[RMDB]
RNA sequence: GGGAACGACUCGAGUAGAGUCGAAAAGUUGUGGAUUUGCCAAUGAUGAAAUCAAACGCUUCGUGUAAAUAUUCUGGAAUUACAGAUUUUCCGGUUGGUGGCACAACACACAAAAGCUGUUCGUGUGCUCUAGAUUAUUAUUCGUAAUAAUCUAGAGAAAAGAAACAACAACAACAAC
Reactivity to DMS in 0.01 (KOAc 150mM, MgCl2 10mM, bicine 150mM(pH8.5), 24C), signal-to-noise 6, nucleotides 027 to 126: g010u010u000g010u000g010g000a210u010u010u000g000c020c010a040a050u020g000a100u010g000a070a080a110u010c100a090a070a130c190g000c070u000u020c220g020u000g010u010a040a050a090u020a050u020u010c040u020g000g000a090a060u030u020a090c080a060g000a060u010u000u010u010c030c110g010g000u000u010g000g020u000g000g010c030a030c050a020a080c040a040c030a030c080a050a090a080a070g010c110u020g020u010u000c130g010u010g020u010g010
Reactivity to 2A3 in 0.01 (KOAc 150mM, MgCl2 10mM, bicine 150mM(pH8.5), 24C), signal-to-noise 9, nucleotides 027 to 126: g010u020u020g020u020g060g040a170u040u040u110g020c020c020a030a020u100g070a050u100g030a080a040a070u110c070a130a090a060c060g020c110u130u110c130g120u060g050u180a050a120a080u160a130u190u050c030u080g060g050a080a060u120u070a160c030a060g040a080u070u010u040u010c020c000g050g000u010u030g020g020u020g020g030c010a000c010a010a040c020a000c000a000c010a020a150a050a040g070c110u060g040u070u060c070g010u040g030u040g060

Notes
Source: RMDB library OK1LIB, as collected in RNAgym. The record gives the reactivity of an RNA of 177 nucleotides to DMS and 2A3. 2A3 adducts were read by reverse transcription with SuperScript II with manganese. The DMS profile rests on 13,843 reads. For 2A3, 6,574 sequencing reads were counted.